Structure probing data (2A3 and DMS) for a 177-nucleotide construct. 2A3 is a SHAPE reagent: it acylates the 2'-hydroxyl of flexible nucleotides of all four kinds. The 2A3 profile rests on 1,204 reads. The DMS profile rests on 1,131 reads.
RNA sequence: GGGAACGACUCGAGUAGAGUCGAAAAAAGCGAUACUGCUGCUUACGAGAAACAAGGGAUGCUGCGCACGCUGAUUAAAGUCACGUUCGGUUAUCCUGCGAUUUUUGACGAGGUUCGGCAGGAAUGCGGCCACAGCUAGAUUCGUCUAGCUGUGGCCAAAAGAAACAACAACAACAAC
Reactivity to 2A3 in 0.01 (KOAc 150mM, MgCl2 10mM, bicine 150mM(pH8.5), 24C), signal-to-noise 2, nucleotides 027 to 126: a000a000g050c010g000a040u070a140c000u000g050c000u000g000c000u040u020a020c000g000a000g020a090a000a000c000a010a000g000g030g000a010u010g010c000u060g000c090g050c030a010c000g040c160u030g020a000u150u110a160a060a010g040u020c010a010c010g000u050u050c000g030g000u040u090a020u030c000c000u000g020c000g110a130u080u000u000u000u070g050a070c050g010a010g010g000u130u290c050g010g000c000a000g040g060a010a000u080g020c020
Reactivity to DMS in 0.01 (KOAc 150mM, MgCl2 10mM, bicine 150mM(pH8.5), 24C), signal-to-noise 1, nucleotides 027 to 126: a040a000g000c070g000a120u000a160c000u000g000c000u000g040c010u020u000a040c050g000a080g060a060a030a060c000a000a270g000g000g000a020u000g000c000u000g000c300g060c150a030c030g080c080u000g000a000u010u030a190a030a140g000u000c000a010c030g010u000u000c090g090g000u000u070a020u010c000c000u000g010c300g000a160u000u000u000u000u000g030a230c130g000a090g000g040u000u000c120g030g000c000a050g030g000a110a040u140g000c030